[RMDB]
RNA sequence: GGGAACGACUCGAGUAGAGUCGAAAAUGCUCGUCUUCCCCGGUCAGCCUCCCGAGUUCCUCUUCUUCUUCCCUGCUGAGGUUCUUCCCUCCGGCGGCCAGUUGCUUCUUCUUGUUCUCGAGGGCCUUGAGCCCACAGUUCGCUGUGGGCAAAAGAAACAACAACAACAAC
Reactivity to DMS in 0.01 (KOAc 150mM, MgCl2 10mM, bicine 150mM(pH8.5), 24C), signal-to-noise 9, nucleotides 027 to 129: u010g000c010u000c050g010u010c050u030u030c000c000c000c000g030g030u030c130a070g030c070c020u000c020c020c020g020a120g020u000u010c020c010u000c040u020u020c000u000u020c060u010u000c030c020c020u010g020c050u020g000a140g010g020u020u010c020u010u030c010c000c010u000c050c050g000g000c150g000g040c000c000a030g020u000u000g000c050u000u040c000u040u020c040u000u050g010u030u020c000u020c030g000a110g020g010g000c090c020u020u000g010a280
Reactivity to 2A3 in 0.01 (KOAc 150mM, MgCl2 10mM, bicine 150mM(pH8.5), 24C), signal-to-noise 9, nucleotides 027 to 129: u070g000c010u020c030g040u020c040u040u050c000c000c010c010g010g030u060c030a020g030c000c000u040c020c010c000g020a030g030u020u030c020c000u020c000u050u010c010u040u020c000u020u040c010c000c010u020g010c030u040g030a060g030g020u060u020c010u030u030c010c000c000u040c020c010g030g000c030g030g010c020c010a020g010u040u060g070c020u010u030c000u040u000c010u040u100g070u110u010c030u010c020g040a100g000g020g020c010c010u020u060g020a010
Chemical mapping of a 170-nucleotide RNA with DMS and 2A3.
The 2A3 profile rests on 43,214 reads.
The RNA was probed in 150 mM KOAc, 10 mM MgCl2 and 150 mM bicine (pH 8.5) at 24 C.
For DMS, 114,295 sequencing reads were counted.
2A3 adducts were read by reverse transcription with SuperScript II with manganese.
Reactivities are given for positions 27 through 129.